[RMDB]
RNA sequence: GGGAACGACUCGAGUAGAGUCGAAAAUUGGGCUAGACUAAUGGAGGUGAAACAGCAGUGUUGUGAACCAGCUCAUUGCUUUGUGACAACUCAGUGCUAUAUGUUAUGCUACUAUAAUAUCUAAGGCAUAAAAUUCAUUCUUCGGAAUGAAUUUUAUAAAAGAAACAACAACAACAAC
Reactivity to DMS in 0.01 (KOAc 150mM, MgCl2 10mM, bicine 150mM(pH8.5), 24C), signal-to-noise 7, nucleotides 027 to 126: u010u010g010g010g010c040u000a130g000a080c070u000a090a100u010g010g010a070g000g010u000g000a100a110a070c060a050g010c030a050g020u000g000u010u000g010u010g000a110a130c130c210a120g000c030u000c050a030u000u000g000c020u000u010u000g030u010g000a170c070a050a050c050u000c040a070g020u010g000c060u010a080u000a050u000g010u000u000a040u010g000c060u000a080c080u010a060u010a050a080u000a040u000c090u010a070a140g010g020c100
Reactivity to 2A3 in 0.01 (KOAc 150mM, MgCl2 10mM, bicine 150mM(pH8.5), 24C), signal-to-noise 3, nucleotides 027 to 126: u070u050g030g010g000c040u050a010g050a080c030u070a090a120u120g060g010a040g020g040u040g050a070a040a030c010a010g000c010a010g020u030g040u180u080g020u040g030a060a050c040c010a030g000c000u010c020a040u030u090g000c000u100u080u140g030u010g040a010c020a030a010c020u010c050a030g030u030g020c010u090a060u010a010u250g060u060u050a040u070g050c000u050a100c000u050a060u050a280a140u060a050u090c050u070a070a050g080g010c020

Structure probing data (DMS and 2A3) for a 177-nucleotide construct.
It was measured as part of the RMDB library OK2TST.
For 2A3 the reverse transcriptase was SuperScript II with manganese.
Values are in units of 0.01, from 0 to 300, in steps of 10.